[RMDB]
RNA sequence: GGGAACGACUCGAGUAGAGUCGAAAAGAUAUGGAUCCCGUAGGGAGCUCCGUGGUCGGAAACGACCACCGAGCAUCGAUCUACAGGGAUCCUAAGUCAAACCACAGUUUCUUCGGAAACUGUGGAACAAUUACAACUGGUUCGCCAGUUGUAAUUGAAAAGAAACAACAACAACAAC
Reactivity to 2A3 in 0.01 (KOAc 150mM, MgCl2 10mM, bicine 150mM(pH8.5), 24C), signal-to-noise 3, nucleotides 027 to 126: g010a000u020a010u080g000g000a000u000c010c010c000g010u000a000g000g040g050a060g000c000u000c020c010g000u010g000g010u000c000g030g000a010a010a010c010g000a000c000c000a000c000c020g000a000g000c000a010u300c040g000a020u000c000u010a040c210a200g000g000g010a000u000c000c000u000a000a000g010u010c010a080a100a130c010c000a000c000a010g000u010u000u010c040u080u220c300g160g000a000a000a010c000u000g000u010g010g000a010a020
Reactivity to DMS in 0.01 (KOAc 150mM, MgCl2 10mM, bicine 150mM(pH8.5), 24C), signal-to-noise 5, nucleotides 027 to 126: g000a020u010a040u000g000g000a000u010c000c000c000g050u000a010g000g010g000a010g040c000u000c000c300g020u000g000g010u000c000g000g000a010a010a040c000g020a010c000c000a010c000c170g020a010g010c000a240u010c210g000a020u000c000u000a000c010a170g010g000g000a000u000c000c000u000a010a070g000u000c010a130a130a230c010c000a010c000a020g000u000u000u000c010u000u010c230g020g010a010a000a000c000u000g020u000g010g000a040a050